[RMDB]
RNA sequence: GGGAACGACUCGAGUAGAGUCGAAAAGCGCAUUUUAUCAUCGACGGAUAAACAUAACACGCCCGAUGCGUCCUGUAUAUUAAAUAUAUCAUAACCUACAUUGUUACCGUGUAUUAAUUUAUGAUUAAACACAUAUCCAUUAUCGUAAUACACACUACUACCCCUUCUGAUUCGUCAGAAGGGGUAGAAAAGAAACAACAACAACAAC
Reactivity to 2A3 in 0.01 (KOAc 150mM, MgCl2 10mM, bicine 150mM(pH8.5), 24C), signal-to-noise 4, nucleotides 027 to 156: g020c040g010c010a010u050u050u060u190a070u150c050a030u090c080g090a060c060g050g010a030u070a070a170a010c050a090u210a140a030c060a060c130g050c000c020c030g000a020u030g010c010g010u050c000c040u060g070u010a060u020a030u150u220a090a170a020u210a000u030a020u140c030a050u030a150a120c000c020u070a080c040a150u080u130g030u090u080a050c080c090g000u000g000u000a050u050u020a070a070u050u050u120a070u070g010a000u010u160a070a140a020c090a020c010a100u100a030u150c090c040a020u050u080a040u160c030g010u000a010a020u020a060c020a000c010a010c090u130a050
Reactivity to DMS in 0.01 (KOAc 150mM, MgCl2 10mM, bicine 150mM(pH8.5), 24C), signal-to-noise 1, nucleotides 027 to 156: g030c030g040c010a090u000u000u000u020a050u010c070a130u010c050g010a100c090g120g000a140u010a070a070a100c110a110u000a120a100c070a130c010g020c020c030c100g000a070u000g010c010g000u000c090c080u010g020u000a010u010a070u000u000a080a060a300u000a070u000a020u010c020a050u010a070a110c100c050u000a060c090a030u010u000g020u010u000a110c090c100g010u000g000u040a020u000u010a040a120u010u000u000a020u040g010a080u000u000a080a140a090c090a050c060a150u000a090u010c080c020a050u000u000a090u020c110g000u020a070a040u000a010c020a050c010a100c050u000a210